[RMDB]
RNA sequence: GGGAACGACUCGAGUAGAGUCGAAAACGGGACACGAUGACCCGAAAACGGGACACAACGUCCUAAUAACGGGACACAAUGUCCUAAUAACGGGACAUAACGACCCGAAAAAGGGACACUAUGACCCUACUAUCCCUCGUUUCGACGAGGGAUAGUAAAAAGAAACAACAACAACAAC
Reactivity to 2A3 in 0.01 (KOAc 150mM, MgCl2 10mM, bicine 150mM(pH8.5), 24C), signal-to-noise 1, nucleotides 027 to 126: c020g000g000g030a030c040a040c150g120a130u030g050a010c000c000c010g010a040a030a000a040c050g000g000g000a000c010a000c020a130a180c060g020u010c000c000u000a030a000u110a030a030c090g000g010g000a000c000a000c010a100a070u070g010u000c000c000u000a080a000u050a020a010c070g000g000g020a010c010a010u030a060a020c100g070a060c000c000c070g090a020a000a000a000a000g010g010g000a000c000a000c030u110a110u190g030a060c000c020c000
Reactivity to DMS in 0.01 (KOAc 150mM, MgCl2 10mM, bicine 150mM(pH8.5), 24C), signal-to-noise 1, nucleotides 027 to 126: c140g000g000g000a110c070a000c120g030a110u000g020a040c000c000c000g000a030a090a130a050c300g000g000g000a040c000a070c100a090a100c180g000u000c000c000u000a090a090u060a100a210c260g000g000g000a100c000a100c040a190a080u000g000u000c050c000u000a010a020u000a190a170c070g000g000g000a130c000a000u000a050a180c090g000a050c010c000c000g010a010a000a050a140a170g000g000g000a050c040a060c240u000a010u000g010a060c030c000c000
The record gives the reactivity of an RNA of 177 nucleotides to 2A3 and DMS.
2A3 is a SHAPE reagent: it acylates the 2'-hydroxyl of flexible nucleotides of all four kinds.
The data come from the RNA Mapping Database (RMDB), library OK2TRN.
The 2A3 profile rests on 1,526 reads.